Record summary
Structure probing data (DMS) for a 177-nucleotide construct. The DMS profile rests on 1,372 reads. Reactivities are given for positions 27 through 126.

[RMDB]
RNA sequence: GGGAACGACUCGAGUAGAGUCGAAAAGGAGUGCUACCGAAAGGUAGCACUCCAACAAAUCGGUGUAAGUACAGCCAGUCUUACACCGUGCGGCACAGCGGAAACGCUGAUGUCGUAUACAAGGCUAUAUUAAUACGGCGUUCGCGCCGUAUUAAUAAAAAGAAACAACAACAACAAC
Reactivity to DMS in 0.01 (KOAc 150mM, MgCl2 10mM, bicine 150mM(pH8.5), 24C), signal-to-noise 2, nucleotides 027 to 126: g000g020a000g090u000g010c000u000a010c000c010g000a110a090a150g050g010u000a010g000c000a010c010u000c000c000a010a060c110a030a070a090u010c010g010g000u000g000u000a000a010g000u030a090c110a060g000c010c040a290g030u000c010u000u000a020c010a010c000c000g010u010g000c020g010g030c000a010c000a030g000c000g010g000a110a090a160c000g040c000u000g010a020u010g030u000c000g020u000a050u030a130c190a090a080g000g000c020u010a150